[RMDB]
Chemical mapping of a 177-nucleotide RNA with DMS and 2A3. Values are in units of 0.01, from 0 to 300, in steps of 10. Conditions: 150 mM KOAc, 10 mM MgCl2 and 150 mM bicine (pH 8.5), 24 C. Source: RMDB library OK2TST, as collected in RNAgym. High 2A3 reactivity points to a flexible backbone, as in loops and unpaired stretches.
RNA sequence: GGGAACGACUCGAGUAGAGUCGAAAAAAGCAAGUGACUACCAGGGAGAAGUGGAUGUUGUAGAGGAGCUCAUUCUGAACGUGAAUGUUGCUUUGAUGGAGCUCUAUCUACACAAUGAUCCUGCUGAACUUAUUUAGGCGUUCGCGCCUAAAUAAGUAAAAGAAACAACAACAACAAC
Reactivity to DMS in 0.01 (KOAc 150mM, MgCl2 10mM, bicine 150mM(pH8.5), 24C), signal-to-noise 4, nucleotides 027 to 126: a060a060g020c060a090a080g020u000g020a120c070u000a140c070c020a070g010g010g010a080g010a100a080g010u000g020g010a140u010g010u000u000g010u000a010g010a060g000g000a010g000c010u000c000a120u000u000c070u010g020a020a020c060g000u000g000a130a140u020g000u010u000g000c080u010u010u000g010a030u000g010g020a010g000c000u000c000u000a080u000c000u000a000c010a020c050a080a080u000g010a110u010c010c010u010g010c070u000g000a110
Reactivity to 2A3 in 0.01 (KOAc 150mM, MgCl2 10mM, bicine 150mM(pH8.5), 24C), signal-to-noise 2, nucleotides 027 to 126: a020a020g100c060a070a010g030u040g080a030c010u010a040c010c030a030g020g120g010a110g030a150a040g070u050g070g050a080u060g040u200u050g000u050a000g000a000g000g010a000g000c020u000c000a050u090u000c030u060g020a030a020c040g070u090g160a210a120u210g020u040u050g070c020u170u060u110g030a050u080g130g020a010g000c010u000c000u020a300u000c000u010a010c020a000c000a000a020u060g010a010u040c000c010u010g000c040u050g030a040